Annotation:
Chemical mapping of a 207-nucleotide RNA with DMS and 2A3. The reactions ran in a buffer of 150 mM KOAc, 10 mM MgCl2 and 150 mM bicine (pH 8.5), at 24 C. 2A3 adducts were read by reverse transcription with SuperScript II with manganese. Values are in units of 0.01, from 0 to 300, in steps of 10. Values cover nucleotides 27 to 156.

[RMDB]
RNA sequence: GGGAACGACUCGAGUAGAGUCGAAAAUCGAACACGAGAGUUCACGAGAACUCACUCGAUCGUGAGUACUCGAACGAGUGUGUGAUCACUCUCUCUCGUACGUGAUCGAGAGUUCGAACGUGUGUGAUCGAUCGUGAGAACGAUCGUGUGUACGUUCCUCACAAGGAAUCUUCGGAUUCCUUGUGAGAAAAGAAACAACAACAACAAC
Reactivity to DMS in 0.01 (KOAc 150mM, MgCl2 10mM, bicine 150mM(pH8.5), 24C), signal-to-noise 2, nucleotides 027 to 156: u000c000g010a070a100c020a100c010g000a130g000a090g010u000u000c050a200c060g040a060g020a070a010c020u000c000a030c010u020c030g020a160u000c290g020u030g000a090g050u010a070c020u000c010g020a040a090c020g030a060g020u000g000u000g030u000g000a080u000c020a020c000u000c050u060c010u000c000u000c020g010u010a090c140g000u040g000a130u000c030g020a030g010a060g030u000u000c030g020a060a060c020g000u000g000u000g010u000g000a120u000c010g000a020u000c010g030u030g010a290g000a260a010c000g000a020u000c000g000u010g020u000g020u010a140c010g000u000u010c000
Reactivity to 2A3 in 0.01 (KOAc 150mM, MgCl2 10mM, bicine 150mM(pH8.5), 24C), signal-to-noise 4, nucleotides 027 to 156: u050c010g010a040a010c010a010c010g010a010g010a000g030u160u120c070a020c100g030a030g000a060a010c000u000c000a020c020u070c070g190a160u070c050g010u010g030a050g050u080a110c060u010c010g020a070a030c050g000a000g010u000g000u040g060u140g080a100u200c000a000c010u020c000u020c000u020c000u000c010g000u060a050c100g050u090g080a110u020c010g000a010g010a000g060u040u090c070g010a030a010c020g000u060g000u000g000u040g120a090u050c000g000a010u000c000g000u020g030a130g000a050a010c010g000a000u000c000g000u010g010u020g000u020a020c010g000u000u000c010